RNA sequence: GGGAACGACUCGAGUAGAGUCGAAAAGAUAUGGACAAGCCAUAACAUGUGCGUGAUGUCGGAAACGACAUACGCGAAUUAUGGAACUACUUGUCCUAAGUCAAAGGCGAUGCUUCGGCAUCGCCAAGAUGCUUUUACGCUUCGGCGUAAAAGCAUCAAAAGAAACAACAACAACAAC
Reactivity to 2A3 in 0.01 (KOAc 150mM, MgCl2 10mM, bicine 150mM(pH8.5), 24C), signal-to-noise 1, nucleotides 027 to 126: g000a000u040a060u080g000g010a000c000a000a020g000c000c000a000u040a020a080c190a190u300g180u230g180c030g010u190g300a090u000g020u030c000g010g000a030a000a030c080g020a000c000a000u030a020c000g010c010g010a000a040u090u000a000u040g010g000a110a080c110u300a040c000u280u020g000u030c000c000u000a040a030g070u000c070a070a060a200g000g000c000g000a000u000g000c050u100u200c300g030g000c000a010u000c000g000c000c000a010a000
Reactivity to DMS in 0.01 (KOAc 150mM, MgCl2 10mM, bicine 150mM(pH8.5), 24C), signal-to-noise 1, nucleotides 027 to 126: g050a020u000a300u050g020g000a010c000a030a030g000c000c000a000u010a020a030c300a070u000g000u000g000c000g000u000g000a010u000g000u000c000g000g000a070a040a270c100g010a020c010a000u000a000c000g000c000g000a190a240u000u000a000u010g000g000a100a000c000u060a300c010u000u020g000u010c010c010u000a000a080g000u000c130a130a210a180g000g060c000g010a000u000g000c000u000u010c220g020g000c010a030u000c000g010c000c000a000a080
An RNA of 177 nucleotides, treated with 2A3 and DMS and read out base by base. Conditions: 150 mM KOAc, 10 mM MgCl2 and 150 mM bicine (pH 8.5), 24 C. 2A3 adducts were read by reverse transcription with SuperScript II with manganese. Source: RMDB library TTRDES, as collected in RNAgym.